[RMDB]
Conditions: 150 mM KOAc, 10 mM MgCl2 and 150 mM bicine (pH 8.5), 24 C. Chemical mapping of a 207-nucleotide RNA with DMS and 2A3. It was measured as part of the RMDB library RNAMAK.
RNA sequence: GGGAACGACUCGAGUAGAGUCGAAAAAAACGCUGGGUUUCGGAGUACCUUGAAGAGGCUCCGAGUGUACUGAAGCGCGCACGGUACACGUUUGACGAGCCUUGGAGUAUGACGAAACCUGUGCUGAAGCGCGCACGGCAACCGAAAGGUGCGAAAACAAAUACUUAAUGUUCGCAUUAAGUAUUUGAAAAGAAACAACAACAACAAC
Reactivity to DMS in 0.01 (KOAc 150mM, MgCl2 10mM, bicine 150mM(pH8.5), 24C), signal-to-noise 3, nucleotides 027 to 156: a030a030a130c030g040c010u000g000g030g060u000u000u000c020g030g020a300g010u000a030c000c200u020u000g000a180a300g000a070g000g020c000u000c010c000g020a020g020u000g000u010a020c000u000g010a050a040g010c020g000c010g000c010a300c020g010g000u010a010c000a010c000g000u010u020u000g020a150c220g010a080g000c000c000u000u000g010g020a030g010u000a020u000g010a300c000g000a070a010a020c020c010u010g020u000g000c020u000g000a050a050g010c030g020c030g020c020a300c040g000g010c010a040a040c000c000g010a160a120a130g010g010u000g020c010g000a060a060a110a180
Reactivity to 2A3 in 0.01 (KOAc 150mM, MgCl2 10mM, bicine 150mM(pH8.5), 24C), signal-to-noise 3, nucleotides 027 to 156: a010a000a010c020g000c010u010g000g000g000u000u000u000c010g010g000a030g010u000a010c020c040u160u010g010a010a000g000a000g010g000c010u010c010c000g010a010g000u000g000u000a000c000u020g060a250a070g000c000g000c000g000c000a010c010g000g000u000a000c010a000c010g020u130u220u160g010a010c000g000a000g010c020c000u000u010g000g000a040g000u010a010u040g020a000c000g000a000a000a000c000c000u000g000u000g000c000u020g020a120a030g000c000g000c000g000c010a000c000g010g000c000a010a010c000c000g030a080a040a030g000g000u010g000c000g070a070a020a000a010